[RMDB]
The record gives the reactivity of an RNA of 177 nucleotides to 2A3 and DMS. The RNA was probed in 150 mM KOAc, 10 mM MgCl2 and 150 mM bicine (pH 8.5) at 24 C.

RNA sequence: GGGAACGACUCGAGUAGAGUCGAAAACGUGAGAGGUUCGCCUCUCACGAAAUAAAAGCUGGAAUAAAUAAAUGCGUAAGAGCAAGAACGCAAAAUAAAUAAAAAGUUAGUACUUCGGUACUAACAACAAGUCAUAUAUCUUCGGAUAUAUGACUUGAAAAGAAACAACAACAACAAC
Reactivity to 2A3 in 0.01 (KOAc 150mM, MgCl2 10mM, bicine 150mM(pH8.5), 24C), signal-to-noise 3, nucleotides 027 to 126: c010g010u020g000a030g000a000g010g010u080u090c140g100c040c000u000c010u000c000a000c000g000a000a010a010u100a000a080a010a020g030c090u090g120g090a140a060u120a180a140a040u140a070a110a050u190g000c000g000u020a080a040g020a040g140c050a060a060g040a090a010c000g000c000a000a000a010a220u170a030a090a010u160a070a090a070a010a010g000u000u000a000g000u000a000c000u030u050c170g030g000u000a000c000u000a000a000c000a000a010
Reactivity to DMS in 0.01 (KOAc 150mM, MgCl2 10mM, bicine 150mM(pH8.5), 24C), signal-to-noise 2, nucleotides 027 to 126: c020g010u020g010a010g010a040g000g040u010u000c210g040c010c000u000c000u010c000a000c010g020a000a050a080u000a030a050a100a080g000c070u010g010g020a100a060u000a020a040a090u010a090a090a080u040g000c000g000u010a070a140g000a130g020c180a100a100g020a100a030c040g000c030a030a030a060a060u000a050a040a100u010a080a030a060a100a100g020u000u000a010g000u000a010c000u000u040c180g040g010u000a000c010u000a000a000c000a040a170

Description: For DMS the reverse transcriptase was MarathonRT. Values cover nucleotides 27 to 126.